[RMDB]
RNA sequence: GGGAACGACUCGAGUAGAGUCGAAAAGCAAAAUGCAGGUAACAUCAGGCCCUGAUACAUAGGACCAGUGAUUAUAGUACAGAUUAGGAGGUCGUCUACGCCUAGCAUUGAGUGUGACAAGAUUGCCCAGUGGCGCGUAUUUCGAUACGCGCCACUGAAAAGAAACAACAACAACAAC
Reactivity to DMS in 0.01 (KOAc 150mM, MgCl2 10mM, bicine 150mM(pH8.5), 24C), signal-to-noise 1, nucleotides 027 to 126: g030c070a020a070a050a040u010g010c030a010g010g010u000a080a070c200a070u000c150a040g030g000c010c020c000u020g010a100u030a030c300a060u030a030g000g000a050c010c030a140g030u010g010a030u020u000a130u030a030g000u020a030c120a200g010a030u000u000a060g030g000a030g010g020u000c010g030u000c020u000a030c160g000c050c010u000a140g020c030a010u010u010g000a230g000u000g000u010g000a100c160a050a160g020a120u000u020g010c010c020
This 177-nucleotide RNA was probed chemically with DMS. The RNA was probed in 150 mM KOAc, 10 mM MgCl2 and 150 mM bicine (pH 8.5) at 24 C. Source: RMDB library OK2TRN, as collected in RNAgym.